[RMDB]
RNA sequence: GGGAACGACUCGAGUAGAGUCGAAAAGAUAUGGACUUGAUGAGAGGGAGCUACUCGGAAACGAGAAUAGCGAGGAUCUCUCCCAAGUCCUAAGUCAAAGAGUCAAUCUGUUCGCAGAUUGACUCAACCCAGUAUUCAACUUCGGUUGAAUACUGGGAAAAGAAACAACAACAACAAC
Reactivity to 2A3 in 0.01 (KOAc 150mM, MgCl2 10mM, bicine 150mM(pH8.5), 24C), signal-to-noise 2, nucleotides 027 to 126: g010a010u090a050u130g000g000a000c000u040u000g040a050u120g020a110g000a020g000g050g000a000g030c010u020a010c000u010c000g020g030a130a040a000c020g000a010g040a300a300u080a060g010c020g020a160g000g020a040u010c020u000c020u000c010c000c000a000a010g000u000c000c000u020a070a000g040u000c050a280a020a010g010a000g000u010c010a010a000u000c000u010g030u070u120c300g040c090a000g000a010u000u000g000a000c000u000c000a000a020
Reactivity to DMS in 0.01 (KOAc 150mM, MgCl2 10mM, bicine 150mM(pH8.5), 24C), signal-to-noise 1, nucleotides 027 to 126: g000a020u000a300u030g000g010a030c000u000u000g020a080u020g000a010g020a000g020g010g020a100g020c000u000a030c000u000c000g000g010a120a090a130c000g020a040g010a110a120u000a010g000c010g020a030g030g000a030u000c010u000c010u000c000c250c000a000a040g000u000c000c010u000a000a030g020u000c060a110a170a070g000a030g000u000c000a000a000u000c000u000g010u000u000c200g020c020a000g000a000u000u000g020a000c010u010c010a010a060
Structure probing data (2A3 and DMS) for a 177-nucleotide construct. For 2A3, 3,407 sequencing reads were counted. For DMS the reverse transcriptase was MarathonRT. Conditions: 150 mM KOAc, 10 mM MgCl2 and 150 mM bicine (pH 8.5), 24 C. Values cover nucleotides 27 to 126. For 2A3 the reverse transcriptase was SuperScript II with manganese.